[RMDB]
RNA sequence: GGGAACGACUCGAGUAGAGUCGAAAACUUCGGACUGAACCAAACACGAUCAACAAAACCUUGCUUUUCCCGCAUUCCAUUAAGGACGGGGGUUAUCCUUUUGAGAUAACGGCAGGCGCAGGUCCUGGAUUGAAACCUUGUUCGCAAGGUUUCAAUCAAAAGAAACAACAACAACAAC
Reactivity to DMS in 0.01 (KOAc 150mM, MgCl2 10mM, bicine 150mM(pH8.5), 24C), signal-to-noise 1, nucleotides 027 to 126: c070u000u020c030g000g040a100c040u010g010a160a060c120c120a040a100a080c060a070c110g000a070u000c070a040a110c180a040a040a050a100c030c030u000u000g060c000u000u000u000u000c020c010c010g040c220a140u000u010c020c000a140u020u010a070a100g000g010a040c070g020g010g060g000g000u000u000a020u000c030c000u000u000u000u000g020a150g010a020u000a010a000c020g010g000c050a010g010g010c070g040c150a040g000g000u000c010c000u000g020
Reactivity to 2A3 in 0.01 (KOAc 150mM, MgCl2 10mM, bicine 150mM(pH8.5), 24C), signal-to-noise 2, nucleotides 027 to 126: c000u100u110c050g000g040a020c030u050g020a120a050c080c000a050a110a060c100a020c070g050a080u050c020a010a190c050a040a160a010a040c000c030u060u110g000c010u130u070u060u090c010c000c000g000c060a180u020u010c030c000a070u160u260a240a020g030g010a000c000g000g010g000g000g000u040u010a000u000c010c030u000u160u250u300g300a300g020a020u010a000a000c000g060g020c030a010g020g000c050g000c020a000g000g020u000c000c000u020g050

The record gives the reactivity of an RNA of 177 nucleotides to DMS and 2A3. High 2A3 reactivity points to a flexible backbone, as in loops and unpaired stretches. DMS adducts were read by reverse transcription with MarathonRT. For DMS, 818 sequencing reads were counted. The reactions ran in a buffer of 150 mM KOAc, 10 mM MgCl2 and 150 mM bicine (pH 8.5), at 24 C. Values cover nucleotides 27 to 126.